[RMDB]
RNA sequence: GGGAACGACUCGAGUAGAGUCGAAAACUCUCCUUUCAGCCAGCGGGCUGUCUUCCCAGGUGUAGAUCACCUAUUCUAACUUCACCUGUUUUGAUACCCUGAUGAGGAAAGUCCCAGGACUUGUCAGCAUUCAACUUUAGUUCGCUAAAGUUGAAUGAAAAGAAACAACAACAACAAC
Reactivity to 2A3 in 0.01 (KOAc 150mM, MgCl2 10mM, bicine 150mM(pH8.5), 24C), signal-to-noise 6, nucleotides 027 to 126: c010u010c010u010c010c000u030u100u100c050a060g030c070c000a060g070c160g100g040g000c070u040g010u010c010u020u000c000c010c010a000g000g010u010g010u050a080g020a170u170c050a060c080c020u040a140u140u080c070u050a060a140c020u050u030c020a010c010c010u010g040u030u060u050u050g040a040u070a080c010c000c020u020g030a050u040g010a020g010g020a040a030a010g030u000c020c010c000a020g040g050a050c040u060u060g030u110c020a020g020
Reactivity to DMS in 0.01 (KOAc 150mM, MgCl2 10mM, bicine 150mM(pH8.5), 24C), signal-to-noise 7, nucleotides 027 to 126: c070u000c040u000c020c030u000u000u000c050a050g010c060c050a100g010c120g010g000g020c080u010g010u000c040u000u000c040c060c010a040g010g020u000g010u010a070g010a140u010c100a060c110c090u010a090u010u010c060u010a070a120c040u000u000c030a040c030c020u000g000u000u000u000u000g010a070u000a070c080c060c000u000g000a070u000g000a030g000g000a050a040a050g000u000c020c010c010a150g010g000a120c070u000u000g010u000c040a080g010
Chemical mapping of a 177-nucleotide RNA with 2A3 and DMS. The DMS profile rests on 10,622 reads. The reactions ran in a buffer of 150 mM KOAc, 10 mM MgCl2 and 150 mM bicine (pH 8.5), at 24 C. Values cover nucleotides 27 to 126. For DMS the reverse transcriptase was MarathonRT. High DMS reactivity at an A or C suggests that its Watson-Crick edge is free.